RNA sequence: GGGAACGACUCGAGUAGAGUCGAAAAACACCAAAACUGAAAACGGAAGGCAAUCCUUCCACGACGAUACUUACUUUCCUUUGAUCAUCGUUACUACUGGCAUAGCCACAAAGGAGAACAAACAUGAGCGCGGACACUGACUUCGGUCAGUGUCCAAUCUUCAUAUCGAGUUCGCUCGAUAUGAAGAAAAAGAAACAACAACAACAAC
Reactivity to DMS in 0.01 (KOAc 150mM, MgCl2 10mM, bicine 150mM(pH8.5), 24C), signal-to-noise 1, nucleotides 027 to 156: a000c070a230c030c010a040a040a070a240c100u030g000a000a050a130a030c130g000g050a030a000g090g010c070a090a140u000c000c010u000u030c000c000a090c040g030a130c030g000a120u000a030c080u000u030a070c150u000u000u010c010c000u000u000u000g010a080u010c080a090u000c110g030u000u000a080c040u000a050c090u000g000g000c050a070u000a110g010c030c030a030c030a000a080a060g000g010a090g000a030a140c060a050a040a100c030a040u030g000a120g020c030g010c030g000g010a030c000a000c020u040g000a030c020u000u000c300g030g000u000c000a000g030u000g010u000c000c000a000a050
Reactivity to 2A3 in 0.01 (KOAc 150mM, MgCl2 10mM, bicine 150mM(pH8.5), 24C), signal-to-noise 4, nucleotides 027 to 156: a000c060a090c020c040a080a090a000a090c130u170g080a070a070a010a010c070g010g000a000a000g000g000c170a080a170u220c000c000u010u010c000c000a030c010g030a000c020g040a040u060a190c030u120u040a070c010u060u170u050c000c000u030u030u030g070a050u120c050a020u050c050g090u050u090a090c090u020a050c030u050g010g000c040a270u130a110g020c030c000a010c020a010a040a010g000g020a020g010a090a020c050a100a070a030c050a060u200g060a050g060c140g000c070g050g000a000c000a000c010u000g000a000c000u000u020c130g060g000u000c000a000g000u000g000u010c000c000a000a000
This 207-nucleotide RNA was probed chemically with DMS and 2A3. DMS adducts were read by reverse transcription with MarathonRT. For 2A3 the reverse transcriptase was SuperScript II with manganese. Reactivities are rounded to 0.1 and cut off at 0 and 3. The RNA was probed in 150 mM KOAc, 10 mM MgCl2 and 150 mM bicine (pH 8.5) at 24 C.